[RMDB]
RNA sequence: GGGAACGACUCGAGUAGAGUCGAAAACAACCUAUGAAGCUAUUACUUCUCAGCCACUCCGCAGUAUCAAUGACCGGAUCCGUCUGACUGAGCAAGGGGAAGUCAUUGGUAAUAAAUAUGGAAACAACUACCCGGUUUUAUUCGUAAAACCGGGUAGAAAAGAAACAACAACAACAAC
Reactivity to 2A3 in 0.01 (KOAc 150mM, MgCl2 10mM, bicine 150mM(pH8.5), 24C), signal-to-noise 4, nucleotides 027 to 126: c020a010a050c000c000u040a060u130g110a080a010g010c040u050a070u130u110a130c030u100u020c050u030c090a030g040c000c020a030c070u030c010c010g020c010a010g030u030a000u020c020a030a010u040g010a010c010c030g130g040a110u000c010c010g110u080c130u080g200a300c090u160g040a030g110c070a100a130g000g000g010g010a010a010g000u000c000a000u000u010g000g010u020a030a040u110a020a130a010u280a040u130g060g020a000a160a040c020a010a010
Reactivity to DMS in 0.01 (KOAc 150mM, MgCl2 10mM, bicine 150mM(pH8.5), 24C), signal-to-noise 2, nucleotides 027 to 126: c050a070a190c080c020u020a010u020g000a090a110g020c150u000a090u010u020a060c020u020u020c120u030c030a170g000c060c010a020c040u030c010c010g010c100a100g000u020a000u020c050a010a030u000g000a030c050c020g000g010a270u020c000c030g000u030c050u000g000a230c130u040g020a110g010c210a090a130g020g000g010g010a200a130g000u000c030a000u000u000g010g000u000a010a050u050a040a100a080u070a070u000g000g000a100a030a030c140a010a180
Annotation
Conditions: 150 mM KOAc, 10 mM MgCl2 and 150 mM bicine (pH 8.5), 24 C. The record gives the reactivity of an RNA of 177 nucleotides to 2A3 and DMS. For 2A3 the reverse transcriptase was SuperScript II with manganese. The data come from the RNA Mapping Database (RMDB), library OK1LIB. For DMS the reverse transcriptase was MarathonRT.